[RMDB]
An RNA of 207 nucleotides, treated with DMS and 2A3 and read out base by base. For DMS, 7,637 sequencing reads were counted. It was measured as part of the RMDB library OK3TST. DMS adducts were read by reverse transcription with MarathonRT. 2A3 adducts were read by reverse transcription with SuperScript II with manganese. Reactivities are given for positions 27 through 156. The RNA was probed in 150 mM KOAc, 10 mM MgCl2 and 150 mM bicine (pH 8.5) at 24 C.

RNA sequence: GGGAACGACUCGAGUAGAGUCGAAAAUAAUGGGUGUUGCGUUUUAACGCGUCAAGUUUUCUCAAAUAGCGUAAGCGCCGGACGUGGUUAUUCAUCGGAAAUCGCUCCGAUGACAGAAUUUUUGCUUUUUGCAUAGUAUUUUUUCCGAUGGAGGGUGAAUACAAUGUGUAUUCGUACACAUUGUAUUAAAAGAAACAACAACAACAAC
Reactivity to DMS in 0.01 (KOAc 150mM, MgCl2 10mM, bicine 150mM(pH8.5), 24C), signal-to-noise 3, nucleotides 027 to 156: u000a080a120u010g000g030g020u000g000u000u000g000c010g010u000u000u000u000a050a100c020g020c000g010u000c040a040a110g010u010u010u010u000c060u000c040a080a090a150u000a140g020c020g010u000a140a210g020c040g040c050c050g020g020a040c030g020u010g020g010u010u000a080u010u000c010a020u010c000g020g000a040a070a110u000c180g010c090u000c070c030g020a020u000g000a060c100a060g010a060a060u000u000u000u010u000g010c090u000u000u010u010u000g000c030a060u020a080g000u000a020u000u000u000u000u000u000c030c020g010a090u020g010g000a080g010g020g020u010g000
Reactivity to 2A3 in 0.01 (KOAc 150mM, MgCl2 10mM, bicine 150mM(pH8.5), 24C), signal-to-noise 3, nucleotides 027 to 156: u230a030a050u050g030g010g060u060g030u090u090g030c030g010u020u070u000u170a070a020c000g020c000g040u050c030a040a050g020u030u060u180u030c090u040c050a170a210a080u140a040g000c010g010u040a170a060g010c010g000c050c030g040g020a020c050g020u060g010g020u070u070a050u160u070c010a000u010c010g000g030a050a080a040u070c030g040c130u000c050c040g010a020u030g020a020c020a020g160a080a060u090u070u060u050u100g050c010u140u120u100u170u130g000c000a000u020a050g040u040a170u030u150u020u000u050u010c020c020g000a030u030g010g030a010g050g000g000u060g010